This 207-nucleotide RNA was probed chemically with DMS and 2A3. For 2A3, 5,018 sequencing reads were counted. For DMS the reverse transcriptase was MarathonRT. It was measured as part of the RMDB library RNAMAK.
[RMDB]
RNA sequence: GGGAACGACUCGAGUAGAGUCGAAAAGGGGUCAGAGCGGCAUCAGCUGAGUGAGGUGGGACUGAAGCCUCCACGGUCCCACUACCCACCACUCAGAACUACUGAUGUUCGCUCUGACGGAGGCACCCAAAGCGUAUACGGUUCGCCGUAUACGCAAUACAUAGUCACAGUUCGCUGUGACUAUGUAAAAAGAAACAACAACAACAAC
Reactivity to DMS in 0.01 (KOAc 150mM, MgCl2 10mM, bicine 150mM(pH8.5), 24C), signal-to-noise 3, nucleotides 027 to 156: g000g000g070g010u010c040a020g020a040g040c000g000g010c000a020u000c010a050g020c030u000g000a090g020u000g010a190g000g010u010g000g000g060a070c020u010g000a060a030g040c010c010u000c010c000a300c050g010g000u000c000c000c000a000c010u000a020c050c020c010a300c000c010a040c000u000c010a070g000a080a060c060u000a300c020u010g010a020u010g020u000u000c030g000c000u000c020u020g010a020c040g020g060a050g010g030c010a130c020c030c030a100a090a220g000c050g000u000a020u000a000c000g000g000u000u010c300g020c010c000g000u000a000u010a010c000g030c000a010a060
Reactivity to 2A3 in 0.01 (KOAc 150mM, MgCl2 10mM, bicine 150mM(pH8.5), 24C), signal-to-noise 3, nucleotides 027 to 156: g040g010g000g000u020c000a000g000a000g000c000g020g000c000a000u010c000a000g040c000u000g000a000g000u000g000a010g010g020u010g000g000g000a010c000u020g050a110a030g000c000c000u000c010c000a000c000g000g000u000c000c000c000a000c000u010a010c010c040c000a030c000c000a000c000u000c010a000g050a060a040c180u300a010c010u130g010a000u000g000u040u120c000g000c000u000c000u000g010a000c010g000g000a000g000g010c010a040c000c000c000a100a050a010g000c000g000u000a000u000a010c000g010g090u030u130c270g040c110c000g000u000a000u000a000c010g000c000a000a000